Structure probing data (DMS and 2A3) for a 207-nucleotide construct.
[RMDB]
RNA sequence: GGGAACGACUCGAGUAGAGUCGAAAAUAUCAAGCUGAUCCGUUCUUCCUGUCCCUUUAGGAUCAGCGAGGGACAGGAUGACCUCUCCGAGAGGAGUAAAAUGGUCUGUGCGACGACGUAUGACCGGACCGCUUAGUCGUCGCUUAGGUCCGGGAGAGAUUUUAUCAUACUUCGGUAUGAUAAAAUCAAAAGAAACAACAACAACAAC
Reactivity to DMS in 0.01 (KOAc 150mM, MgCl2 10mM, bicine 150mM(pH8.5), 24C), signal-to-noise 3, nucleotides 027 to 156: u000a090u010c030a060a160g020c040u010g000a030u000c010c020g040u000u020c030u000u000c020c010u000g020u010c010c020c020u000u010u000a180g010g020a090u010c100a090g040c150g010a010g010g000g000a050c010a050g020g010a020u000g010a050c050c030u000c010u000c030c050g000a230g000a220g030g000a100g000u000a050a060a110a120u000g010g030u000c020u000g010u010g030c000g010a060c020g000a040c010g020u000a070u000g000a100c010c010g000g000a040c030c040g010c080u000u000a130g010u000c020g000u000c020g020c020u000u000a070g010g030u000c010c020g010g010g000a090g020a160
Reactivity to 2A3 in 0.01 (KOAc 150mM, MgCl2 10mM, bicine 150mM(pH8.5), 24C), signal-to-noise 4, nucleotides 027 to 156: u170a020u070c040a020a030g050c050u050g030a060u070c030c030g040u090u020c010u040u000c010c000u000g000u010c010c010c010u040u040u080a170g070g020a170u120c100a010g070c020g000a000g000g000g000a000c000a000g010g000a010u010g010a000c000c010u030c000u000c020c010g050a040g010a030g070g050a010g010u130a010a050a030a060u130g010g000u000c020u030g030u020g010c010g000a020c010g000a000c020g110u140a080u120g070a080c040c000g010g020a030c020c020g000c050u040u050a010g020u050c020g040u020c030g010c000u010u090a010g000g010u000c020c000g010g000g000a040g000a000

The reactions ran in a buffer of 150 mM KOAc, 10 mM MgCl2 and 150 mM bicine (pH 8.5), at 24 C. DMS adducts were read by reverse transcription with MarathonRT. For 2A3 the reverse transcriptase was SuperScript II with manganese.